[RMDB]
RNA sequence: GGGAACGACUCGAGUAGAGUCGAAAAGAUAUGGAGGCCAGGGAGAUGUCAUUCGGAAACGAAUGUCAUCGACGAUCUGGCUCCUAAGUCAAACCCACUGCUUCGGGUUCGCCCGAAGCAGUGGGAAGUUGUUUAAGUAGUUCGCUACUUAAACAACAAAAGAAACAACAACAACAAC
Reactivity to DMS in 0.01 (KOAc 150mM, MgCl2 10mM, bicine 150mM(pH8.5), 24C), signal-to-noise 1, nucleotides 027 to 126: g020a040u010a300u010g000g000a030g020g020c000c000a000g000g020g000a030g000a020u000g010u000c000a010u010u000c000g000g000a110a060a170c000g010a020a000u000g000u000c000a000u000c000g000a090c260g020a010u000c000u000g000g010c000u010c000c000u000a030a160g020u000c020a110a120a180c000c000c000a000c020u010g000c000u000u010c000g000g000g010u000u010c230g030c000c000c000g000a020a010g010c000a010g000u000g030g000g000a010a010
Reactivity to 2A3 in 0.01 (KOAc 150mM, MgCl2 10mM, bicine 150mM(pH8.5), 24C), signal-to-noise 2, nucleotides 027 to 126: g020a010u060a050u120g000g000a030g100g300c000c000a010g020g000g000a020g000a000u010g010u010c000a000u000u000c000g030g040a080a050a040c010g000a000a000u010g000u010c010a000u010c010g020a090c000g000a010u000c000u000g010g000c000u000c000c000u030a130a010g060u020c050a060a000a300c000c020c000a000c010u000g000c000u030u020c020g000g170g100u060u090c300g100c100c010c000g020a010a010g020c000a010g000u000g000g010g000a000a000